The data come from the RNA Mapping Database (RMDB), library TTRINS. The record gives the reactivity of an RNA of 177 nucleotides to DMS. Reactivities are rounded to 0.1 and cut off at 0 and 3.

[RMDB]
RNA sequence: GGGAACGACUCGAGUAGAGUCGAAAAGAUAUGGACAAGUCGCAUCCGAAUUACUUUGAUCACCACGUAACAUCGAUCGGAAACGAUCGUGGUGGUGGGAGUAAUAGGAUGCGACUUGUCCUAAGUCCGCAUAAAUUUACUUCGGUAAAUUUAUGCGAAAAGAAACAACAACAACAAC
Reactivity to DMS in 0.01 (KOAc 150mM, MgCl2 10mM, bicine 150mM(pH8.5), 24C), signal-to-noise 2, nucleotides 027 to 126: g000a140u010a300u000g000g010a010c000a010a000g010u000c010g000c000a000u000c000c000g000a270a210u000u000a000c010u020u000u000g000a080u020c000a000c010c010a000c020g010u010a080a120c240a040u010c060g010a000u010c020g020g010a090a190a210c000g000a010u000c000g040u000g000g000u000g000g000u000g000g020g000a010g000u000a000a010u000a260g000g010a010u000g000c000g000a000c000u000u000g000u010c000c000u000a000a120g000u000c030
Background:
The RNA was probed in 150 mM KOAc, 10 mM MgCl2 and 150 mM bicine (pH 8.5) at 24 C. DMS adducts were read by reverse transcription with MarathonRT.